[RMDB]
RNA sequence: GGGAACGACUCGAGUAGAGUCGAAAAGAUAUGGAGCAUGGGUAGGGAGGAGAGGAUGACAGGAUUGAAUUCGGAAACGAAUUCUCGAUUCAUCACUCUCCGAAGAACUACCCAUGCUCCUAAGUCAUCAAUAAGUCCAGUUCGCUGGACUUAUUGAAAAAGAAACAACAACAACAAC
Reactivity to DMS in 0.01 (KOAc 150mM, MgCl2 10mM, bicine 150mM(pH8.5), 24C), signal-to-noise 4, nucleotides 027 to 126: g020a030u010a300u010g000g010a000g020c010a010u000g000g000g030u000a000g000g010g010a090g010g010a010g000a000g010g000a020u010g010a020c300a120g000g010a150u010u010g010a030a010u000u000c010g010g000a150a110a260c000g000a020a010u000u000c010u000c050g010a300u000u000c000a050u000c000a160c020u000c000u000c000c000g010a050a070g000a100a170c010u000a010c000c000c000a000u000g000c000u000c000c000u000a000a060g010u000c060a200